[RMDB]
RNA sequence: GGGAACGACUCGAGUAGAGUCGAAAAUAGUAUUAAACCGUUGUGGAAAACAAGAAAAUUGCGAAUUACUAGUAUAGAAAAUGCAUUCUAAGUCGCCUGUGAUUCCAAUAGCAAAGAAAUUGAUCAAAGGAUUUAGGUAUUUCGAUACCUAAAUCCUAAAAGAAACAACAACAACAAC
Reactivity to 2A3 in 0.01 (KOAc 150mM, MgCl2 10mM, bicine 150mM(pH8.5), 24C), signal-to-noise 1, nucleotides 027 to 126: u060a000g100u000a120u090u190a030a260a120c050c010g070u000u000g030u070g080g000a140a120a040a080c020a050a000g130a050a160a040a030u020u020g040c060g050a040a000u050u050a000c040u010a010g130u040a060u020a070g040a000a060a040a000u210g090c050a060u010u000c000u070a000a140g120u170c000g110c030c000u050g000u040g000a040u010u000c020c020a000a040u000a070g000c140a010a010a010g040a020a190a050u110u060g000a060u250c050a000a120
Reactivity to DMS in 0.01 (KOAc 150mM, MgCl2 10mM, bicine 150mM(pH8.5), 24C), signal-to-noise 2, nucleotides 027 to 126: u000a080g020u040a290u010u000a090a130a140c140c000g040u000u020g000u010g000g010a160a110a160a140c060a030a090g010a080a070a040a030u000u020g010c180g000a030a010u040u010a000c000u000a030g010u020a140u000a040g000a050a010a030a150u020g010c090a080u000u010c010u010a070a060g010u010c210g000c050c040u020g010u000g000a050u000u000c020c060a010a010u000a050g050c180a040a040a040g000a030a040a160u030u010g000a090u020c060a050a070

An RNA of 177 nucleotides, treated with 2A3 and DMS and read out base by base.
2A3 adducts were read by reverse transcription with SuperScript II with manganese.
Reactivities are given for positions 27 through 126.
For DMS, 2,091 sequencing reads were counted.
The RNA was probed in 150 mM KOAc, 10 mM MgCl2 and 150 mM bicine (pH 8.5) at 24 C.